[RMDB]
RNA sequence: GGGAACGACUCGAGUAGAGUCGAAAAUGCAUCUUCCUACCUGUGCAAUUAUGAAGGUAACAUUAUGAGAUUCAGAGCUAGAAAAUUUUAUGUGUUACUUCAUCCUGGAGCGGACAUCCGUCAGAAGAUCCAUGCCAUCGUCUGCUAGUUAAUAGCAGGAUAGGCUGAGUUUCGACUCAGCCUAUCCAAAAGAAACAACAACAACAAC
Reactivity to 2A3 in 0.01 (KOAc 150mM, MgCl2 10mM, bicine 150mM(pH8.5), 24C), signal-to-noise 2, nucleotides 027 to 156: u040g000c010a010u040c030u060u040c010c010u010a080c000c020u080g020u010g190c090a070a170u180u040a040u160g030a090a010g080g040u010a000a000c000a000u160u220a010u160g060a000g010a020u080u040c060a060g050a120g230c090u240a130g150a110a230a020a010u070u030u070u040a020u010g020u000g010u000u000a000c000u010u010c000a050u010c000c050u030g020g010a030g010c070g000g030a030c010a160u110c040c040g090u050c030a020g000a060a000g000a070u000c080c000a030u100g000c010c030a040u080c020g120u020c050u000g000c000u000a010g030u060u200a200a050u030a160g000c040a000